RNA sequence: GGGAACGACUCGAGUAGAGUCGAAAAAAUGCGGCCUCAGUUCCAAGCUCUUUCGUGGCACUGUAAACAGUCCUAUUGAGUUAGGGGCAGUCAACCACGUUGCGAAGCUAAAUUAUCUGGUCGAGAGUUACGAUUCCCUACUUCGGUAGGGAAUCAAACGUCUAUAACCGUUCGCGGUUAUAGACGUAAAAGAAACAACAACAACAAC
Reactivity to 2A3 in 0.01 (KOAc 150mM, MgCl2 10mM, bicine 150mM(pH8.5), 24C), signal-to-noise 2, nucleotides 027 to 156: a010a000u080g000c020g000g000c000c000u090c050a030g010u080u000c040c030a030a020g000c010u010c050u040u030u010c050g000u030g020g000c070a000c040u020g020u060a020a220a190c040a100g180u050c000c010u020a030u040u070g130a140g260u060u060a010g030g000g010g000c000a010g050u050c030a000a050c000c000a000c000g020u010u050g070c180g170a120a040g000c000u010a040a000a110u260u120a120u130c080u050g000g010u050c020g030a040g010a020g140u160u130a030c080g000a000u010u000c000c000c000u000a020c010u050u030c180g070g000u000a000g000g000g020a000a000u000c000a000a000
Reactivity to DMS in 0.01 (KOAc 150mM, MgCl2 10mM, bicine 150mM(pH8.5), 24C), signal-to-noise 2, nucleotides 027 to 156: a040a060u010g010c030g030g040c000c000u000c020a080g000u010u000c020c010a160a300g010c040u000c030u000u000u010c040g020u010g010g000c030a010c030u000g030u000a050a140a040c040a150g050u000c010c000u000a010u000u000g000a290g020u000u000a060g000g000g000g020c010a020g000u000c020a070a040c010c010a020c020g010u000u000g000c160g010a020a060g040c020u000a050a000a050u010u000a090u000c010u000g000g020u000c040g000a060g020a150g020u000u000a120c090g010a030u010u000c000c000c000u000a000c000u010u000c300g060g060u000a010g000g000g010a000a000u000c000a010a110
Chemical mapping of a 207-nucleotide RNA with 2A3 and DMS. Source: RMDB library M2RFPK, as collected in RNAgym. The reactions ran in a buffer of 150 mM KOAc, 10 mM MgCl2 and 150 mM bicine (pH 8.5), at 24 C. DMS adducts were read by reverse transcription with MarathonRT.